[RMDB]
RNA sequence: GGGAACGACUCGAGUAGAGUCGAAAAGAUAUGGAUGUUCCCGGAUAGUUGCCUAAGCAAGACUACUAUUCGGAAACGAAUAGAAGUUGAUGACCUUAGGGCACUCUAUCCGGGAACAUCCUAAGUCCAACCUUAGAGUGUUCGCACUCUAAGGUUGAAAAGAAACAACAACAACAAC
Reactivity to DMS in 0.01 (KOAc 150mM, MgCl2 10mM, bicine 150mM(pH8.5), 24C), signal-to-noise 3, nucleotides 027 to 126: g000a100u010a300u010g000g000a000u000g010u000u000c000c010c000g010g030a020u000a000g010u000u000g010c000c000u020a020a010g020c030a060a140g000a010c000u000a150c000u000a010u000u000c000g000g000a130a090a250c010g010a020a010u010a010g000a220a000g010u000u000g010a130u000g010a100c300c010u000u000a040g020g010g010c000a010c270u010c000u000a010u000c000c020g000g000g000a000a000c010a000u010c000c010u000a020a060g010u000c050

An RNA of 177 nucleotides, treated with DMS and read out base by base. The RNA was probed in 150 mM KOAc, 10 mM MgCl2 and 150 mM bicine (pH 8.5) at 24 C.